[RMDB]
RNA sequence: GGGAACGACUCGAGUAGAGUCGAAAAUUUUUGAACAAAAUCAUAUUGGGAAUCACCUAAUAGUUCGUCAUAUUCAUCUAAAACAAUGGUGUUGACAGACAUCAUCUUGAUUUUUUUCAAUUUAAUCCGCCAGUAAAUUAUUCGUAAUUUACUGGCGAAAAGAAACAACAACAACAAC
Reactivity to DMS in 0.01 (KOAc 150mM, MgCl2 10mM, bicine 150mM(pH8.5), 24C), signal-to-noise 2, nucleotides 027 to 126: u030u020u000u000u000g000a000a000c030a020a000a000a000u010c000a030u020a030u000u000g010g000g030a270a230u010c300a150c010c010u030a010a030u020a030g000u000u000c100g000u050c080a060u030a160u020u030c010a050u000c020u010a030a170a060a090c220a060a080u010g000g020u010g010u010u020g020a040c200a130g000a010c020a030u010c120a000u030c200u000u000g010a010u000u000u070u000u000u000u000c010a000a020u020u000u000a080a120u060c150
Reactivity to 2A3 in 0.01 (KOAc 150mM, MgCl2 10mM, bicine 150mM(pH8.5), 24C), signal-to-noise 8, nucleotides 027 to 126: u090u080u010u010u020g000a010a000c010a030a010a010a000u010c000a010u030a050u040u030g020g000g050a110a140u230c080a130c080c000u030a020a010u020a070g070u090u070c060g060u050c060a050u080a110u180u140c030a040u020c070u170a100a100a070a100c070a070a130u140g000g000u010g020u020u060g110a100c100a110g050a010c010a040u100c010a020u030c120u040u020g000a010u020u000u000u010u000u000u030c010a020a020u020u080u190a090a090u050c050